[RMDB]
RNA sequence: GGGAACGACUCGAGUAGAGUCGAAAAUACUUAGUACGCGAGUAGUUGCAGGCAUUCCGGGUGCAGCAACUGACGCGGAAGACUUUUCCCAGAGUGUGCGCUUCAACUGGCGUGCUGAGUAGUGCACGAAUUGCACGUACGUUCGCGUACGUGCAAAGACAGUACUUUUAUUCGUAAAAGUACUGUCAAAAGAAACAACAACAACAAC
Reactivity to DMS in 0.01 (KOAc 150mM, MgCl2 10mM, bicine 150mM(pH8.5), 24C), signal-to-noise 3, nucleotides 027 to 156: u000a040c040u000u000a070g030u000a050c020g010c020g020a080g050u000a050g010u000u000g010c010a120g010g000c020a040u000u000c010c210g010g050g100u000g020c080a300g020c000a050a080c020u000g000a100c070g020c060g030g000a110a110g020a120c080u000u000u000u000c010c000c010a180g010a140g030u000g020u000g030c080g020c060u000u000c050a130a110c050u000g010g020c040g030u000g020c010u000g000a040g020u000a050g020u010g000c050a100c050g000a110a210u000u000g020c000a010c030g010u010a010c000g040u000u010c300g020c020g040u000a000c000g040u000g000c000a010a000a080
Reactivity to 2A3 in 0.01 (KOAc 150mM, MgCl2 10mM, bicine 150mM(pH8.5), 24C), signal-to-noise 6, nucleotides 027 to 156: u030a000c010u010u010a000g010u010a000c010g020c070g050a020g040u040a010g000u020u020g030c100a140g090g020c000a030u070u040c070c090g130g020g000u030g020c040a030g000c020a060a080c060u050g070a050c080g030c060g070g020a020a020g080a050c020u070u070u060u060c010c010c000a010g010a010g020u060g010u050g090c050g010c020u060u040c030a070a050c020u040g070g000c020g000u010g000c010u010g000a010g000u060a020g030u060g060c060a010c130g090a130a140u040u020g000c000a000c000g000u000a000c000g010u010u060c220g010c010g090u000a000c000g000u000g000c000a010a000a000